[RMDB]
RNA sequence: GGGAACGACUCGAGUAGAGUCGAAAAGCACCAAGCCCGGUACCGAGGUGCCCCCGGUGAUCGACGGAAGCAUCUGGGACGCGAUCGCCGGCUGUGAGGCCGGUGGCAACUGGGCGAUCAACACCGGUGUUAAGAACCGGUUCGCCGGUUCUUAACAAAAAGAAACAACAACAACAAC
Reactivity to DMS in 0.01 (KOAc 150mM, MgCl2 10mM, bicine 150mM(pH8.5), 24C), signal-to-noise 2, nucleotides 027 to 126: g030c090a090c020c000a110a170g010c030c010c000g000g030u000a120c100c060g000a140g010g010u010g000c030c030c010c010c010g020g010u010g010a070u000c090g010a100c010g010g020a110a160g020c050a060u010c080u000g000g020g010a240c070g010c070g000a050u000c010g000c000c000g010g010c050u000g000u020g000a140g020g010c020c000g010g020u000g000g000c080a040a050c040u000g000g020g000c000g000a070u020c100a070a050c090a080c050c040g010g010
Reactivity to 2A3 in 0.01 (KOAc 150mM, MgCl2 10mM, bicine 150mM(pH8.5), 24C), signal-to-noise 1, nucleotides 027 to 126: g010c010a010c030c020a060a000g000c000c000c010g050g050u080a080c050c040g090a050g000g010u080g020c000c000c000c000c010g030g050u100g010a120u070c030g170a180c030g040g050a040a030g080c010a030u020c040u190g020g050g080a060c050g000c000g080a020u050c020g010c020c010g010g000c020u040g090u040g060a100g050g000c000c000g060g020u050g030g000c020a050a030c020u000g000g020g000c020g000a100u070c000a050a080c020a010c060c040g000g100
Source: RMDB library OK2TRN, as collected in RNAgym. This 177-nucleotide RNA was probed chemically with DMS and 2A3. For 2A3, 1,705 sequencing reads were counted. For 2A3 the reverse transcriptase was SuperScript II with manganese. The reactions ran in a buffer of 150 mM KOAc, 10 mM MgCl2 and 150 mM bicine (pH 8.5), at 24 C. DMS adducts were read by reverse transcription with MarathonRT.